[RMDB]
RNA sequence: GGGAACGACUCGAGUAGAGUCGAAAAUACACUUUGAUCUUAUUUGAUCGGAUCGUGACCCCAGCCCCGCCGGGCCGACCCGAAAUGAAAAGCUCUCCUCCUGCGAAGCCCCCUCGGGGCGCUGUGCUAAACGGUCAAACUUCGGUUUGACCGUUUAAAAAGAAACAACAACAACAAC
Reactivity to DMS in 0.01 (KOAc 150mM, MgCl2 10mM, bicine 150mM(pH8.5), 24C), signal-to-noise 2, nucleotides 027 to 126: u060a040c050a080c160u000u010u000g010a000u030c000u010u040a110u010u000u000g000a070u010c000g020g000a080u050c100g000u000g000a200c060c010c010c100a110g000c020c030c000c010g050c100c040g000g000g070c020c060g000a090c040c010c030g000a050a070a110u040g030a090a010a080a250g020c020u000c010u000c000c060u010c030c010u000g000c070g000a180a160g040c040c020c040c020c090u010c120g030g000g000g000c070g000c000u000g010u010g000c130
Reactivity to 2A3 in 0.01 (KOAc 150mM, MgCl2 10mM, bicine 150mM(pH8.5), 24C), signal-to-noise 3, nucleotides 027 to 126: u110a010c030a010c030u030u020u130g030a020u020c000u050u250a190u280u300u220g020a030u030c000g040g000a040u060c030g020u020g080a110c010c000c000c020a020g000c000c000c000c000g010c020c010g000g040g050c050c040g010a020c020c020c000g070a090a040a040u150g050a050a080a030a040g010c000u000c000u010c030c010u010c000c000u010g010c000g030a020a000g010c000c020c000c010c010u070c060g000g000g000g010c040g000c010u010g000u020g030c000